Chemical mapping of a 177-nucleotide RNA with DMS. It was measured as part of the RMDB library OK2TST. For DMS, 1,091 sequencing reads were counted. The reactions ran in a buffer of 150 mM KOAc, 10 mM MgCl2 and 150 mM bicine (pH 8.5), at 24 C. DMS adducts were read by reverse transcription with MarathonRT.
RNA sequence: GGGAACGACUCGAGUAGAGUCGAAAAGCAAUGCACUGGUUGCAUGCUUUUUGCAGGGCUUGGUCCAAGGACAAAGCAAAGUAGAGAGUGUGGAACGUAUGGGGAAAGAUAGUUCUCCGGAACAACAACUCCAGCCAUCAUUCGUGAUGGCUGGAGUAAAAGAAACAACAACAACAAC
Reactivity to DMS in 0.01 (KOAc 150mM, MgCl2 10mM, bicine 150mM(pH8.5), 24C), signal-to-noise 1, nucleotides 027 to 126: g010c090a040a090u020g000c030a080c090u020g010g000u020u010g020c010a000u000g010c000u000u000u000u020u000g000c040a090g010g030g010c060u000u000g000g040u000c000c030a090a150g040g010a020c050a050a040a050g000c030a070a050a050g010u000a010g010a060g000a020g000u000g000u000g010g000a070a020c060g020u000a090u010g000g010g040g000a020a060a170g000a130u010a100g000u000u000c040u000c070c060g000g010a100a030c030a070a110c110a050